An RNA of 177 nucleotides, treated with 2A3 and DMS and read out base by base. Values cover nucleotides 27 to 126. The data come from the RNA Mapping Database (RMDB), library OK2TRN.
RNA sequence: GGGAACGACUCGAGUAGAGUCGAAAAUGGGUACACGGCGCUGCUGUCGCCGGUGAAGUCGAUCGCGGAGUAUUCGUUGAGCUUUGAAAGCCGGUGGUAGGCCUCGAUCAUCCGGACGGUGCCGGACCCCCAAGAUAGUGUUCGCACUAUCUUGGGGAAAAGAAACAACAACAACAAC
Reactivity to 2A3 in 0.01 (KOAc 150mM, MgCl2 10mM, bicine 150mM(pH8.5), 24C), signal-to-noise 1, nucleotides 027 to 126: u110g040g010g020u070a070c190a000c130g000g040c000g000c030u160g060c030u160g080u290c000g000c020c000g050g020u010g020a090a030g150u280c120g000a010u010c010g000c010g000g020a020g060u070a060u070u200c000g000u030u040g090a120g080c010u160u090u300g220a210a100a010g010c020c010g040g000u000g000g000u010a030g000g280c000c000u010c000g000a010u040c000a020u030c000c000g070g000a060c040g010g020u020g020c000c000g080g000a030c000
Reactivity to DMS in 0.01 (KOAc 150mM, MgCl2 10mM, bicine 150mM(pH8.5), 24C), signal-to-noise 2, nucleotides 027 to 126: u010g000g010g020u010a080c070a200c020g000g040c020g020c020u000g010c240u020g010u020c140g010c010c000g000g000u010g000a090a110g010u020c120g010a030u010c090g020c150g000g000a090g020u000a130u000u000c020g030u000u000g010a100g000c020u000u010u010g000a150a120a110g000c000c000g010g010u000g010g000u010a080g020g020c040c000u000c020g000a030u010c030a190u010c010c020g010g000a130c040g010g010u000g000c000c010g010g010a150c100